RNA sequence: GGGAACGACUCGAGUAGAGUCGAAAAAUCCAUCGCACACAUGUUCGCAUGUGUUUGCGUAUGGUGCAAUUGAAAUUUCAUUAGGUUGCCUAAUUUGGGUAACAAGUGCAGUGCGUCCUAGUGGCUCCUUUACGUGCAUCUUCGGAUGCACGUAAAGAAAAGAAACAACAACAACAAC
Reactivity to DMS in 0.01 (KOAc 150mM, MgCl2 10mM, bicine 150mM(pH8.5), 24C), signal-to-noise 2, nucleotides 027 to 126: a100u010c000c000a000u010c000g000c000a060c010a030c000a010u000g010u000u000c210g080c010a010u000g010u010g020u000u010u000g030c000g030u030a000u010g000g000u010g000c190a130a090u000u000g010a100a090a060u000u010u010c040a030u000u000a040g000g000u000u000g020c000c010u010a070a050u010u010u000g000g010g030u010a080a060c010a020a040g000u000g020c150a050g020u000g010c010g040u000c000c000u020a030g010u000g010g030c230u000c080
Reactivity to 2A3 in 0.01 (KOAc 150mM, MgCl2 10mM, bicine 150mM(pH8.5), 24C), signal-to-noise 1, nucleotides 027 to 126: a000u040c010c000a000u010c000g000c020a000c000a000c000a010u000g020u080u120c230g020c160a020u010g010u000g000u070u110u050g000c000g020u090a010u010g000g000u020g000c000a040a180u080u170g150a110a080a050u140u170u090c010a000u000u100a040g000g070u000u030g040c000c000u090a160a220u060u140u200g070g000g020u040a080a040c040a010a030g030u000g000c060a000g000u000g160c010g020u030c000c000u010a030g010u010g020g000c010u010c010